Structure probing data (DMS and 2A3) for a 177-nucleotide construct. Reactivities are given for positions 27 through 126. The DMS profile rests on 1,852 reads. The 2A3 profile rests on 3,766 reads. DMS adducts were read by reverse transcription with MarathonRT. 2A3 adducts were read by reverse transcription with SuperScript II with manganese.
[RMDB]
RNA sequence: GGGAACGACUCGAGUAGAGUCGAAAACGCUAUAGAUUCGUCUAUAGCGACUCCUACCCGCCGGCCGGUGCCCGCGGUAGGUGACGCAAACCACCGUGCGAAAUGUACUGGUUUUCGAACCAGUAAAGAGAUUAGACCAUUUCGAUGGUCUAAUCUCAAAAGAAACAACAACAACAAC
Reactivity to DMS in 0.01 (KOAc 150mM, MgCl2 10mM, bicine 150mM(pH8.5), 24C), signal-to-noise 2, nucleotides 027 to 126: c020g030c000u000a010u000a020g010a040u000u010c190g020u000c000u000a010u000a000g000c000g020a150c060u010c020c010u000a050c060c010c060g040c060c120g010g000c040c070g030g020u010g020c040c030c170g000c080g000g000u000a000g010g010u000g010a100c100g000c110a050a080a100c040c020a060c050c000g020u000g010c040g000a120a160a060u020g010u000a020c000u000g000g000u000u000u000u010c190g010a030a010c000c000a000g000u010a020a060a120
Reactivity to 2A3 in 0.01 (KOAc 150mM, MgCl2 10mM, bicine 150mM(pH8.5), 24C), signal-to-noise 3, nucleotides 027 to 126: c000g000c000u000a010u000a020g000a030u000u070c170g020u000c100u000a010u000a000g000c000g010a000c010u000c000c010u000a040c050c040c040g040c030c030g020g000c010c060g170g080u240g040c020c000c000g000c000g000g010u020a050g000g010u030g060a050c060g000c090a040a060a050c020c010a010c030c030g050u060g020c030g070a080a050a060u170g020u020a010c000u000g000g060u000u020u020u030c130g060a010a000c000c000a000g000u010a000a040a020